The record gives the reactivity of an RNA of 207 nucleotides to 2A3.
The RNA was probed in 150 mM KOAc, 10 mM MgCl2 and 150 mM bicine (pH 8.5) at 24 C.
The data come from the RNA Mapping Database (RMDB), library RNAMAK.

[RMDB]
RNA sequence: GGGAACGACUCGAGUAGAGUCGAAAAGCUAUUAAGGUUCGCCUUAAUAGCAAAAAGAUAUGGAGCCACGUAGACAUGCUCCACAGUCGGAAACGACUGGAGAGCAACAGCUACAUGGCUCCUAAGUCAAAAAUAUCUGGUGUUCGCACCAGAUAAAGUGUCAAUUACGGUUCGCCGUAAUUGACACAAAAGAAACAACAACAACAAC
Reactivity to 2A3 in 0.01 (KOAc 150mM, MgCl2 10mM, bicine 150mM(pH8.5), 24C), signal-to-noise 2, nucleotides 027 to 156: g000c000u000a000u000u000a010a020g020g030u040u130c150g130c030c010u000u000a000a000u010a000g000c000a010a000a000a000a040g000a000u000a000u000g000g000a000g000c010c000a000c010g000u000a000g010a070c100a300u300g000c000u000c000c000a040c010a020g000u000c010g000g000a000a000a000c010g000a000c000u000g010g010a080g000a000g030c090a090a140c050a240g020c000u000a000c000a000u010g000g000c010u000c000c000u000a000a000g000u000c010a000a050a040a020a100u050a020u000c000u000g000g000u010g040u140u040c290g020c100a000c000c000a000g000a010u030a010a070a010